[RMDB]
RNA sequence: GGGAACGACUCGAGUAGAGUCGAAAAUUAUCGCUGCUGGAGCAGUUGUAACAAAAAAUGUUGCAGAAAAUACUAUUGUAGGUGGUGUUCCUGCAAAGCUUUUAAGAGUUAUUGAUGAAAUCCCAGACGACGAUCCAUCGUUCGCGAUGGAUCGUCGAAAAGAAACAACAACAACAAC
Reactivity to 2A3 in 0.01 (KOAc 150mM, MgCl2 10mM, bicine 150mM(pH8.5), 24C), signal-to-noise 1, nucleotides 027 to 126: u020u040a000u090c000g000c000u090g010c070u050g000g130a130g020c000a040g040u130u110g050u000a000a030c020a000a000a000a000a000a230u070g000u080u000g070c000a000g010a000a130a060a000u160a000c020u090a130u290u200g220u040a110g300g000u180g000g130u000g070u140u140c030c100u000g140c000a040a040a040g040c140u100u050u000u000a110a000g050a020g000u120u140a220u070u230g040a020u000g010a030a030a170u000c110c000c000a000g000a000
This 177-nucleotide RNA was probed chemically with 2A3. Reactivities are given for positions 27 through 126. For 2A3, 273 sequencing reads were counted.